Chemical mapping of a 177-nucleotide RNA with DMS and 2A3. Source: RMDB library OK2TRN, as collected in RNAgym. Reactivities are rounded to 0.1 and cut off at 0 and 3. Reactivities are given for positions 27 through 126.
[RMDB]
RNA sequence: GGGAACGACUCGAGUAGAGUCGAAAACGGUCGGUGGAGGAUUGAUCAUGAACUUCCCUAGCGACAAAGUGAUGCUGCGAAUCGUCCAAUCCAUCCUCGCGAUCCUCAUCGGGAUCGCUUGGGCCUGCUUGGUUUCAGUAUUCGUACUGAAACCAAGAAAAGAAACAACAACAACAAC
Reactivity to DMS in 0.01 (KOAc 150mM, MgCl2 10mM, bicine 150mM(pH8.5), 24C), signal-to-noise 4, nucleotides 027 to 126: c150g000g020u000c050g020g000u000g010g000a120g010g000a080u000u010g010a070u010c140a130u010g010a100a110c130u000u000c010c020c030u000a080g010c020g000a070c060a070a070a130g010u010g010a100u010g010c050u010g010c090g010a070a060u000c040g010u000c050c030a070a110u010c040c050a090u000c010c000u000c100g010c000g010a000u000c000c000u000c210a130u000c250g000g000g000a010u000c000g000c000u000u000g000g000g000c140c060u010g010
Reactivity to 2A3 in 0.01 (KOAc 150mM, MgCl2 10mM, bicine 150mM(pH8.5), 24C), signal-to-noise 4, nucleotides 027 to 126: c030g030g020u040c020g040g180u070g040g040a130g020g020a060u060u120g060a080u100c080a130u170g090a090a070c030u030u040c000c020c000u020a040g050c010g070a050c030a060a110a000g080u100g060a100u100g040c050u030g000c030g030a050a040u040c030g020u000c020c010a010a030u000c020c010a060u040c020c000u030c020g000c000g000a000u020c000c000u090c030a300u160c110g010g000g010a000u000c000g000c000u000u010g010g010g000c000c040u060g020